[RMDB]
RNA sequence: GGGAACGACUCGAGUAGAGUCGAAAACGUAUAGUGACGUUCUUUCUUCGGGACUUUCGAACGAAUAAUUCAAGCUCGAGCGGGAGUAGAUGCGAGGAUUUACCUUAGAGCAGACACGAGCCGCCUGAAAGUUUCCAAAGAGCGUCAGACUGCUCGCGUCACUAGCUAUGUUCGCAUAGCUAGUGACAAAAGAAACAACAACAACAAC
Reactivity to 2A3 in 0.01 (KOAc 150mM, MgCl2 10mM, bicine 150mM(pH8.5), 24C), signal-to-noise 2, nucleotides 027 to 156: c020g110u120a090u060a090g190u050g010a000c000g000u000u000c000u090u040u000c100u200u180c050g010g000g020a020c000u000u060u040c040g040a140a080c070g020a070a050u280a270a050u260u140c080a150a060g060c100u110c080g070a010g020c000g000g000g000a020g010u030a000g020a040u020g000c020g020a000g060g010a080u220u180u220a280c000c020u070u070a080g060a030g120c000a000g010a000c010a000c100g040a060g270c000c000g010c010c050u000g020a010a010a000g000u030u000u060c000c000a010a010a010g010a000g000c010g050u030c000a000g040a010c010u020g020c050u060c020g080c020